[RMDB]
RNA sequence: GGGAACGACUCGAGUAGAGUCGAAAAGGCAAACUGUGACACCUUGCACCCUCAAGAAACAGUACUGUUCCAAGCCCAAAACCAGGACCAUCCUGGGCACCAACAACUUUAUUGCCUUGGCUCACAGAUAUUGAAGAGGCUUCGGCCUCUUCAAUAUAAAAGAAACAACAACAACAAC
Reactivity to DMS in 0.01 (KOAc 150mM, MgCl2 10mM, bicine 150mM(pH8.5), 24C), signal-to-noise 4, nucleotides 027 to 126: g030g000c050a070a070a070c040u000g020u010g000a140c180a080c100c000u000u000g000c070a110c060c010c020u030c090a060a020g000a060a090a060c060a060g020u000a090c090u000g000u010u010c010c020a070a080g000c010c000c000a040a040a100a070c070c030a010g000g000a160c160c120a080u000c030c000u020g010g010g010c050a050c050c090a040a080c140a060a080c130u040u000u010a040u010u020g010c000c000u010u000g000g030c040u010c030a070c170a120g030
Reactivity to 2A3 in 0.01 (KOAc 150mM, MgCl2 10mM, bicine 150mM(pH8.5), 24C), signal-to-noise 5, nucleotides 027 to 126: g040g010c070a070a040a030c030u050g040u080g060a020c020a040c040c000u010u030g000c040a130c010c030c000u040c050a120a070g060a060a100a000c000a000g060u110a070c030u040g060u080u030c020c010a060a010g020c020c020c010a020a130a030a040c030c010a040g000g030a060c070c020a080u130c000c010u000g020g000g000c030a020c030c030a070a090c020a020a030c020u130u130u110a100u090u120g000c000c000u020u020g040g010c000u010c020a060c010a020g160
The data come from the RNA Mapping Database (RMDB), library OK1LIB. Structure probing data (DMS and 2A3) for a 177-nucleotide construct. The RNA was probed in 150 mM KOAc, 10 mM MgCl2 and 150 mM bicine (pH 8.5) at 24 C.